This 177-nucleotide RNA was probed chemically with 2A3 and DMS.

RNA sequence: GGGAACGACUCGAGUAGAGUCGAAAAGAUCAGGCGAAGUCAGCCUCCAACUCAGCUACCAUGUGGAUACAUGGGAAGCUGAGUUAAUGAAGGAUGAUAGACCAAACGUUGGUCUGCACGAGUGCGGGUUAGUACAAUCUUUCGAGAUUGUACUAACAAAAGAAACAACAACAACAAC
Reactivity to 2A3 in 0.01 (KOAc 150mM, MgCl2 10mM, bicine 150mM(pH8.5), 24C), signal-to-noise 9, nucleotides 027 to 126: g050a030u110c070a030g060g000c030g040a100a020g050u010c000a010g020c000c000u000c010c000a010a010c000u000c000a000g000c000u010a020c000c000a000u000g020u050g140g220a090u180a300c000a000u000g000g000g010a020a010g000c000u000g000a000g000u000u010a000a020u040g030a020a010g020g010a010u040g010a020u070a050g050a050c020c000a090a060a040c100g060u070u050g010g010u000c000u010g010c030a030c060g070a050g040u140g050c040g030g060
Reactivity to DMS in 0.01 (KOAc 150mM, MgCl2 10mM, bicine 150mM(pH8.5), 24C), signal-to-noise 9, nucleotides 027 to 126: g010a050u010c050a060g000g020c040g010a170a140g000u010c010a020g000c000c000u000c030c040a030a020c000u000c000a000g010c010u000a270c000c000a000u000g010u010g010g030a140u050a050c000a000u000g000g000g000a080a090g000c000u000g000a000g000u000u010a010a040u010g010a060a020g010g000a040u000g000a020u000a060g000a250c110c020a070a100a110c180g010u010u010g010g010u000c000u000g010c070a060c080g000a070g010u010g010c040g010g010
For 2A3, 33,872 sequencing reads were counted. The reactions ran in a buffer of 150 mM KOAc, 10 mM MgCl2 and 150 mM bicine (pH 8.5), at 24 C. For 2A3 the reverse transcriptase was SuperScript II with manganese. The data come from the RNA Mapping Database (RMDB), library OK1LIB. For DMS the reverse transcriptase was MarathonRT. DMS (dimethyl sulfate) methylates the pairing face of unpaired adenines and cytosines. The DMS profile rests on 65,011 reads.